[RMDB]
RNA sequence: GGGAACGACUCGAGUAGAGUCGAAAAAGUAGAACAAUAAUGCACCUACUAAGGAGCCUACUAUAACUCCGGCGUAUGGUUGGGCUGAAGUGGGUAGCUUGCUUUGUAUUGGCGUAACUAUAUAGCUCUUCACAUAGCUUCCGAUAUAGCCGGCUAAGGCUGGUGUAUGUUUCGACAUACACCAGCCAAAAGAAACAACAACAACAAC
Reactivity to 2A3 in 0.01 (KOAc 150mM, MgCl2 10mM, bicine 150mM(pH8.5), 24C), signal-to-noise 1, nucleotides 027 to 156: a010g140u180a020g070a230a020c130a110a070u250a120a060u180g010c010a040c040c020u010a000c070u030a020a060g140g040a000g200c020c000u030a000c020u040a070u040a140a010c050u000c000c020g020g020c030g030u000a030u040g070g020u070u280g040g000g000c080u040g080a090a010g000u000g030g000g000u010a110g040c020u040u170g000c000u200u090u140g130u150a140u000u090g040g000c040g030u050a040a040c180u000a030u020a030u100a300g010c000u010c000u000u070c010a040c000a120u060a040g010c000u040u000c000c010g000a030u050a020u020a080g030c030c030g000g000c020u080a060a060